[RMDB]
RNA sequence: GGGAACGACUCGAGUAGAGUCGAAAAUGUGAUCUCAGCUCACUAAAACCUCUACCUCCUGGGUUCAAGUGAUUCUUCUGCCUCAGCCUCCCAAGUAACUGGGAUUACAGGCGUAUACCACCAUGCCAAUAUACCCUGAGUUCGCUCAGGGUAUAUUAAAAGAAACAACAACAACAAC
Reactivity to 2A3 in 0.01 (KOAc 150mM, MgCl2 10mM, bicine 150mM(pH8.5), 24C), signal-to-noise 1, nucleotides 027 to 126: u140g000u050g030a030u050c050u000c050a030g020c030u010c030a010c010u050a050a010a080a100c000c020u000c040u070a060c010c010u030c000c010u040g050g020g010u030u050c060a080a060g020u040g100a110u090u030c000u040u020c010u060g050c010c020u050c020a010g030c030c010u000c000c010c010a000a000g000u040a080a050c040u020g010g010g000a010u010u080a010c000a020g030g070c010g010u060a040u050a120c030c010a020c000c030a040u110g030c010c000
Reactivity to DMS in 0.01 (KOAc 150mM, MgCl2 10mM, bicine 150mM(pH8.5), 24C), signal-to-noise 6, nucleotides 027 to 126: u000g010u000g010a030u000c020u010c070a070g010c150u000c070a030c040u010a080a100a090a110c070c020u000c060u000a120c070c020u000c030c020u000g010g010g000u000u000c070a060a070g020u000g010a070u010u000c040u000u000c060u000g010c030c020u000c040a070g000c060c040u000c010c000c020a030a060g020u010a040a090c040u010g000g000g000a050u000u010a020c080a070g000g010c040g010u000a050u010a110c040c020a070c080c060a060u010g010c040c050